This 207-nucleotide RNA was probed chemically with DMS and 2A3. The reactions ran in a buffer of 150 mM KOAc, 10 mM MgCl2 and 150 mM bicine (pH 8.5), at 24 C. The DMS profile rests on 7,320 reads. For 2A3, 2,912 sequencing reads were counted.

RNA sequence: GGGAACGACUCGAGUAGAGUCGAAAAAGAUGACAUGGUGGUUGCACCGUUGUUACAACGAUCGAUUGAAAGUCCGUUUGUGUGGACACAAACUCCGAGUUCAGACCAUACGGUGUGGAAAAACCUUAUUGAGGCGUCGCUUUACGAAGCACAACUAACUCCAAAAUUUAUUCGUAAAUUUUGGAGUAAAAGAAACAACAACAACAAC
Reactivity to DMS in 0.01 (KOAc 150mM, MgCl2 10mM, bicine 150mM(pH8.5), 24C), signal-to-noise 3, nucleotides 027 to 156: a100g010a170u000g010a090c020a070u010g020g020u000g020g020u010u000g000c000a060c040c020g030u010u000g010u000u000a140c070a050a080c020g010a080u000c060g000a150u000u000g010a100a130a150g010u000c000c040g000u000u000u000g040u000g020u010g000g020a110c050a100c060a060a050a050c020u000c020c020g000a130g000u000u000c050a160g010a170c030c030a090u010a080c060g010g050u010g030u010g040g000a070a060a020a070a030c020c010u000u000a160u000u000g010a100g010g020c020g010u010c060g020c050u010u010u000a110c030g020a070a080g010c020a050c030a040a090c080u000a110
Reactivity to 2A3 in 0.01 (KOAc 150mM, MgCl2 10mM, bicine 150mM(pH8.5), 24C), signal-to-noise 5, nucleotides 027 to 156: a000g080a070u090g010a010c030a070u070g000g030u040g000g040u110u210g040c020a000c020c030g010u020u020g020u040u070a060c060a120a010c030g060a060u080c010g040a050u030u160g100a160a060a010g010u000c020c040g080u030u180u050g120u050g070u130g010g020a040c030a000c020a160a070a040c050u030c060c040g010a010g000u050u060c030a030g040a060c010c010a010u040a090c030g020g000u020g000u050g060g030a040a060a030a000a010c030c030u100u090a110u080u150g080a060g020g040c060g040u070c050g030c030u060u020u020a090c120g050a040a000g000c020a010c000a110a050c020u050a010